An RNA of 177 nucleotides, treated with 2A3 and DMS and read out base by base. 2A3 adducts were read by reverse transcription with SuperScript II with manganese. It was measured as part of the RMDB library OK1LIB. Values cover nucleotides 27 to 126. The RNA was probed in 150 mM KOAc, 10 mM MgCl2 and 150 mM bicine (pH 8.5) at 24 C.

RNA sequence: GGGAACGACUCGAGUAGAGUCGAAAAGGCUUCUGAGGUCAAGGACAAGAAGACCAAAGAGGUCCUGAAGCCUUGCCUCCCGGUACACUGGGUCACGCCUGAUGGGUUCCCGGUCUGGCAGGAGUACCUCGGGGGAAGACUUCGGUCUUCCCCCGAGAAAAGAAACAACAACAACAAC
Reactivity to 2A3 in 0.01 (KOAc 150mM, MgCl2 10mM, bicine 150mM(pH8.5), 24C), signal-to-noise 1, nucleotides 027 to 126: g000g000c050u000u000c000u070g020a050g000g010u130c100a080a090g000g030a020c080a160a080g100a000a050g010a040c010c000a030a010a020g050a090g000g000u070c010c020u020g000a040a000g020c000c000u020u020g030c000c000u000c000c000c000g010g050u140a040c080a030c160u120g000g000g100u050c040a000c050g070c000c000u180g060a240u240g050g040g020u100u110c000c000c000g000g020u000c000u000g040g000c000a050g000g030a010g010u090a040c000
Reactivity to DMS in 0.01 (KOAc 150mM, MgCl2 10mM, bicine 150mM(pH8.5), 24C), signal-to-noise 1, nucleotides 027 to 126: g000g000c000u000u000c020u000g000a300g000g000u000c010a060a160g000g050a090c300a210a120g060a060a160g000a000c030c000a110a190a080g000a100g000g000u000c010c030u000g000a090a070g070c010c000u020u000g020c190c010u000c040c030c050g000g050u010a010c100a070c030u010g000g000g000u000c030a150c300g010c000c000u000g000a090u000g000g000g120u000u010c080c010c010g050g000u010c020u000g040g000c000a120g030g000a060g060u000a010c060